RNA sequence: GGGAACGACUCGAGUAGAGUCGAAAAGUGCAGCAGUUCGCUGCUGCACAAAAGGCAUCGUAUCAUUGCUUCGAAGCCAAACUAGAUACUAGAAAGCAGUGAAAAGACACUUCUUCGGAAGUGUCAAGUCUAUUGAACGGUUCGCCGUUCAAUAGACAAAAGAAACAACAACAACAAC
Reactivity to 2A3 in 0.01 (KOAc 150mM, MgCl2 10mM, bicine 150mM(pH8.5), 24C), signal-to-noise 4, nucleotides 027 to 126: g010u000g000c000a000g000c000a000g010u040u070c150g060c120u000g010c010u020g000c010a000c000a000a090a000a000g000g000c000a040u010c040g020u050a020u110c000a020u000u020g010c000u000u040c010g020a040a010g010c010c000a040a040a000c030u040a050g080a250u180a160c030u040a090g160a090a080a000g000c010a000g010u010g040a050a040a030a040g010a000c000a000c000u010u010c000u040u050c230g090g010a000a010g000u000g000u010c000a000a000
Reactivity to DMS in 0.01 (KOAc 150mM, MgCl2 10mM, bicine 150mM(pH8.5), 24C), signal-to-noise 3, nucleotides 027 to 126: g010u000g000c000a000g000c000a000g040u020u010c180g020c020u000g010c000u010g020c010a030c010a020a060a060a110g000g010c010a230u000c050g020u000a060u000c000a010u000u000g000c010u000u010c030g010a050a070g000c000c000a080a060a210c110u000a140g000a150u000a060c120u010a110g010a070a070a020g030c000a010g020u010g000a160a090a110a100g000a010c000a010c000u000u000c000u000u020c170g020g000a010a000g010u000g000u000c010a030a030